[RMDB]
Chemical mapping of a 177-nucleotide RNA with 2A3. 2A3 adducts were read by reverse transcription with SuperScript II with manganese. The reactions ran in a buffer of 150 mM KOAc, 10 mM MgCl2 and 150 mM bicine (pH 8.5), at 24 C. Source: RMDB library OK1LIB, as collected in RNAgym.
RNA sequence: GGGAACGACUCGAGUAGAGUCGAAAACAAACACCAGCGCCCAGGAAGAAAAACCAAAACGUGAACUACUUGACGAAACACGAACGCUGGUGUAAUUCGUCAAGAAACAAAAACAAAACAAACAAAAAGUGAUAGGAGGGUUCGCCCUCCUAUCACUAAAAGAAACAACAACAACAAC
Reactivity to 2A3 in 0.01 (KOAc 150mM, MgCl2 10mM, bicine 150mM(pH8.5), 24C), signal-to-noise 1, nucleotides 027 to 126: c070a120a110a000c000a020c000c000a000g000c000g000c000c000c000a010g080g070a240a000g240a060a130a000a000a000c090c100a030a080a030a160c090g030u100g010a000a000c080u150a000c000u090u000g000a000c000g010a030a030a030c010a000c000g040a140a000c170g030c040u040g000g000u000g010u000a000a070u000u000c000g000u000c000a000a000g050a080a100a000c150a000a020a010a000a000c080a020a120a010a000c040a050a000a000c000a030a220a080a080